[RMDB]
RNA sequence: GGGAACGACUCGAGUAGAGUCGAAAAUCUUCGGCGACUACCGCCCCCCGCCCAGUCGCCGCCAAGUCCUGGCGGCAUACAUCGCCUAUCUGGAGCGGGAGCUGGCGGCCGGCGUGCCGCUGCAUGCUCUCUCCGGAGAAUUCGUUCUCCGGAGAGAAAAAGAAACAACAACAACAAC
Reactivity to DMS in 0.01 (KOAc 150mM, MgCl2 10mM, bicine 150mM(pH8.5), 24C), signal-to-noise 1, nucleotides 027 to 126: u010c090u000u000c030g040g000c020g020a110c020u000a120c090c010g020c040c010c060c010c000c020g040c000c010c040a010g010u010c210g030c000c010g010c020c000a070a100g010u020c170c080u000g030g040c000g000g040c000a020u010a020c160a120u020c110g000c110c060u000a130u000c010u000g000g000a120g000c100g000g000g010a010g040c120u010g010g010c030g000g000c050c080g030g030c120g000u000g010c010c030g000c060u040g010c100a070u020g000c090